[RMDB]
RNA sequence: GGGAACGACUCGAGUAGAGUCGAAAAAACAUGGAGAAACCUGUGUUAGUUGAAGAAAAUUCUCAGUGCAGUUAGGAUUCCCAGUGAUGAACUCCAGGCUUAUCUAACUAGCUGUAAUCUUAGAAAGAUUCUCUCAUGGGUGCUGCGGCUCAUGCCAUAUAAUCAGUACUUUCGAGUACUGAUUAUAAAAAGAAACAACAACAACAAC
Reactivity to DMS in 0.01 (KOAc 150mM, MgCl2 10mM, bicine 150mM(pH8.5), 24C), signal-to-noise 4, nucleotides 027 to 156: a050a040c040a060u000g010g010a140g010a150a070a090c050c030u000g030u000g010u000u000a100g020u010u010g010a110a110g010a080a050a070a100u000u000c020u000c010a090g020u000g010c070a030g020u000u010a050g010g030a220u000u000c010c000c010a140g010u000g000a090u000g020a060a120c020u000c050c100a110g020g020c050u010u010a040u000c030u000a080a130c030u000a080g000c020u000g010u000a040a050u000c020u020u000a090g010a090a120a120g000a120u000u000c020u000c020u010c040a060u000g010g000g030u000g000c030u000g020c100g020g030c010u000c070a070u000g000c010c030a190
Reactivity to 2A3 in 0.01 (KOAc 150mM, MgCl2 10mM, bicine 150mM(pH8.5), 24C), signal-to-noise 3, nucleotides 027 to 156: a010a010c070a060u090g060g020a070g030a090a090a060c040c030u060g030u030g010u060u080a220g020u070u110g030a070a050g000a040a120a070a130u060u010c010u020c020a010g010u010g000c000a010g000u030u030a030g030g000a060u070u040c000c010c020a010g040u100g080a070u090g040a040a030c020u020c020c030a020g050g000c020u110u040a020u090c020u040a020a130c000u000a010g030c010u000g040u070a050a190u030c010u010u030a010g030a020a060a010g070a060u090u000c020u000c000u000c040a020u030g000g000g070u080g020c050u060g010c040g030g010c010u030c030a020u100g030c020c020a050
An RNA of 207 nucleotides, treated with DMS and 2A3 and read out base by base. For 2A3, 1,672 sequencing reads were counted. For DMS the reverse transcriptase was MarathonRT. The DMS profile rests on 9,198 reads.